[RMDB]
Chemical mapping of a 177-nucleotide RNA with 2A3 and DMS. The reactions ran in a buffer of 150 mM KOAc, 10 mM MgCl2 and 150 mM bicine (pH 8.5), at 24 C.
RNA sequence: GGGAACGACUCGAGUAGAGUCGAAAACCCAAGCUGAGAUGCUUGGAGUGUUCGUACCUGGCGCAAGCCAGGGCAAGUGAGGCGCAAGCCUCGCUGACGGCGUGGAAAGGGCUCUCUCUGAGGCCCGGAUCUAUAGAGUCUUCGGACUCUAUAGAUCAAAAGAAACAACAACAACAAC
Reactivity to 2A3 in 0.01 (KOAc 150mM, MgCl2 10mM, bicine 150mM(pH8.5), 24C), signal-to-noise 8, nucleotides 027 to 126: c000c000c000a000a000g010c010u060g030a030g010a120u150g030c010u010u020g030g020a150g050u150g040u060u080c040g020u060a150c000c000u000g000g000c010g000c060a100a030g000c000c000a000g000g000g000c010a020a020g000u010g010a000g000g000c010g000c050a050a040g000c000c000u000c000g000c000u010g030a040c040g020g030c060g050u140g070g070a130a170a190g020g000g000c040u050c000u000c010u010c150u300g020a030g020g020c000c000c000g000
Reactivity to DMS in 0.01 (KOAc 150mM, MgCl2 10mM, bicine 150mM(pH8.5), 24C), signal-to-noise 9, nucleotides 027 to 126: c050c000c000a010a020g010c000u000g010a170g010a070u020g000c000u000u000g000g000a160g010u010g010u000u000c060g010u000a090c010c000u000g000g000c000g010c300a100a140g010c000c000a010g000g000g010c140a080a010g010u000g000a010g010g010c000g000c270a110a150g000c000c000u000c000g010c000u000g000a080c060g000g000c200g010u010g010g000a080a100a110g010g000g000c000u040c010u000c040u040c180u030g010a030g010g010c000c000c000g000